The record gives the reactivity of an RNA of 207 nucleotides to DMS and 2A3. DMS adducts were read by reverse transcription with MarathonRT. It was measured as part of the RMDB library M2RFPK. The 2A3 profile rests on 5,653 reads. Values cover nucleotides 27 to 156. Reactivities are rounded to 0.1 and cut off at 0 and 3. In probing experiments dimethyl sulfate is read out at A N1 and C N3, which are open when not base-paired.

[RMDB]
RNA sequence: GGGAACGACUCGAGUAGAGUCGAAAAGGACUGCGCAGUCCGGCAACAUCAGUAGAGAGCCCGCUAUACGUGACGGAUUGGCUGAAGCGUACAGAAAUAUUGAGCCUCCUGCAAGAGGCAGCCAAGCAAAACGUACGUGAGUUCGCUCACGUACGAACCUAUGUAGUUCGUUCGCGAACUACAUAGGAAAAGAAACAACAACAACAAC
Reactivity to DMS in 0.01 (KOAc 150mM, MgCl2 10mM, bicine 150mM(pH8.5), 24C), signal-to-noise 2, nucleotides 027 to 156: g000g000a030c040u000g020c070g030c070a060g030u000c020c030g020g020c050a080a090c060a100u000c040a130g020u000a070g000a120g000a090g020c000c030c030g020c060u010a100u010a050c030g040u020g000a200c030g010g000a160u000u000g010g040c000u000g010a060a300g020c020g010u000a130c040a080g020a090a090a170u010a130u010u000g020a100g000c020c020u000c040c010u000g010c170a110a080g000a050g030g030c000a020g000c040c020a030a120g010c100a080a070a070a190c020g010u000a000c010g030u000g000a040g000u000u000c290g020c000u000c000a020c000g010u010a010c010g000a040a050
Reactivity to 2A3 in 0.01 (KOAc 150mM, MgCl2 10mM, bicine 150mM(pH8.5), 24C), signal-to-noise 6, nucleotides 027 to 156: g020g010a020c020u060g040c150g020c150a010g030u010c000c000g030g020c010a050a060c010a090u120c010a010g060u120a030g050a010g000a020g090c020c010c010g000c040u070a050u030a090c060g000u040g040a010c030g060g040a090u060u050g030g000c010u020g020a050a020g040c010g010u040a030c030a030g140a090a150a010u260a110u150u150g040a020g020c000c010u000c010c050u100g060c050a100a030g000a010g020g000c010a000g030c020c000a020a010g000c050a030a040a030a060c010g000u000a000c000g000u000g010a000g000u020u100c190g020c120u010c000a000c000g000u000a000c000g000a000a000